[RMDB]
RNA sequence: GGGAACGACUCGAGUAGAGUCGAAAAGCAAGGCUUACAACGAAGAUGGCACGGUCAAACAAUCGACCAUCGGUAAGUACAACGAGAAAUACGGUGACGCAUCCGGUAACUACGUUUUCAUCCGUGCGUGCCUGUCUCUGUUCGCAGAGACAGGCACAAAAGAAACAACAACAACAAC
Reactivity to 2A3 in 0.01 (KOAc 150mM, MgCl2 10mM, bicine 150mM(pH8.5), 24C), signal-to-noise 1, nucleotides 027 to 126: g050c040a020a140g150g000c020u030u000a030c000a230a110c150g200a070a080g020a020u000g010g000c140a080c300g040g000u030c060a190a100a110c020a050a000u000c000g050a090c000c000a020u000c000g040g000u000a020a010g020u040a160c040a080a020c030g020a000g020a000a090a000u180a070c030g050g000u020g040a000c030g000c130a050u000c030c040g000g000u020a060a060c020u070a050c140g070u110u020u000u100c070a050u000c050c000g040u010g030c030
Reactivity to DMS in 0.01 (KOAc 150mM, MgCl2 10mM, bicine 150mM(pH8.5), 24C), signal-to-noise 1, nucleotides 027 to 126: g020c050a160a100g050g000c010u000u000a030c000a070a080c260g000a070a190g000a040u000g000g040c080a090c000g010g000u000c100a010a180a140c300a080a010u000c010g000a230c030c000a000u000c010g000g000u000a000a050g000u000a090c090a040a100c080g000a090g000a050a070a030u010a040c000g010g000u000g000a060c090g010c120a050u000c040c010g000g000u000a070a140c080u010a070c060g040u000u000u020u000c140a110u000c090c050g010u000g000c160
The record gives the reactivity of an RNA of 177 nucleotides to 2A3 and DMS. It was measured as part of the RMDB library OK2TST. The RNA was probed in 150 mM KOAc, 10 mM MgCl2 and 150 mM bicine (pH 8.5) at 24 C. 2A3 adducts were read by reverse transcription with SuperScript II with manganese. For DMS, 719 sequencing reads were counted. 2A3 is a SHAPE reagent: it acylates the 2'-hydroxyl of flexible nucleotides of all four kinds.